[RMDB]
RNA sequence: GGGAACGACUCGAGUAGAGUCGAAAAGGGCGCUCCCCUCGGAGGUCCCUCGAGGGGGUUCACAUCCCCAACCCGCGGGCCGGCUACUCUUCUUUCCCUUCUCUCGUCUUCUUCGGUCAACCUCCGACAAUCUGGCGGUUCGCCGCCAGAAAAAGAAACAACAACAACAAC
Reactivity to 2A3 in 0.01 (KOAc 150mM, MgCl2 10mM, bicine 150mM(pH8.5), 24C), signal-to-noise 3, nucleotides 027 to 129: g010g000g000c080g000c060u100c000c000c000c000u000c000g040g000a020g040g060u060c020c000c000u020c010g030a090g030g000g000g000g000u050u030c040a050c000a100u080c000c010c040c000a010a050c020c010c010g040c050g000g000g020c000c030g000g050c000u080a080c020u010c000u040u010c000u040u090u000c000c000c000u060u000c010u020c000u000c030g100u000c000u050u030c000u030u020c020g010g000u040c030a040a050c030c020u020c000c000g010a030c030a060a100
Reactivity to DMS in 0.01 (KOAc 150mM, MgCl2 10mM, bicine 150mM(pH8.5), 24C), signal-to-noise 4, nucleotides 027 to 129: g000g000g000c090g040c070u030c030c000c000c050u030c050g030g020a090g000g000u030c090c050c010u020c040g040a100g060g030g000g020g040u000u000c140a130c210a090u050c080c040c040c080a080a150c020c000c000g050c090g000g000g000c030c030g020g000c060u020a000c060u050c060u030u010c050u000u000u000c090c040c010u070u000c050u020c030u010c020g010u010c110u040u020c050u030u000c060g030g000u000c110a040a030c020c040u030c010c000g000a050c300a070a100